Chemical mapping of a 177-nucleotide RNA with DMS and 2A3.
[RMDB]
RNA sequence: GGGAACGACUCGAGUAGAGUCGAAAACUUAGAAUGUGUCUGAGAAGGCUCGUGAUGAAAUCUAUGGUGGACCGGCAUCUUACGCACUUCGAAUUCGGCCCGGGGCGCGACUACUUAAACUUUAGUGCUAGCUAAAUCAGUUCGCUGAUUUAGCUAGAAAAGAAACAACAACAACAAC
Reactivity to DMS in 0.01 (KOAc 150mM, MgCl2 10mM, bicine 150mM(pH8.5), 24C), signal-to-noise 3, nucleotides 027 to 126: c090u000u010a060g000a080a080u010g010u010g000u000c100u000g000a120g040a110a100g000g010c040u020c050g010u010g000a090u030g030a070a070a150u030c070u000a060u000g000g000u000g000g000a070c060c020g010g000c050a040u010c080u010u000a120c110g000c040a060c060u000u020c080g010a070a150u000u020c070g000g000c040c020c020g000g020g000g020c050g010c030g010a080c060u010a030c090u000u000a030a080a070c070u010u020u030a110g020u030g000
Reactivity to 2A3 in 0.01 (KOAc 150mM, MgCl2 10mM, bicine 150mM(pH8.5), 24C), signal-to-noise 8, nucleotides 027 to 126: c030u060u060a060g090a120a110u140g040u010g030u030c020u050g040a040g010a160a080g060g010c030u040c110g080u100g040a130u080g050a060a070a100u050c070u120a100u140g080g000u070g030g050a050c030c000g010g010c010a040u020c020u070u060a050c060g000c000a050c030u030u060c040g060a120a120u050u090c020g010g000c000c020c000g020g000g000g010c030g000c020g050a030c020u090a020c020u070u160a100a110a040c010u090u090u090a040g010u040g090

It was measured as part of the RMDB library OK1LIB. The 2A3 profile rests on 6,196 reads. The RNA was probed in 150 mM KOAc, 10 mM MgCl2 and 150 mM bicine (pH 8.5) at 24 C. The DMS profile rests on 5,112 reads. DMS adducts were read by reverse transcription with MarathonRT.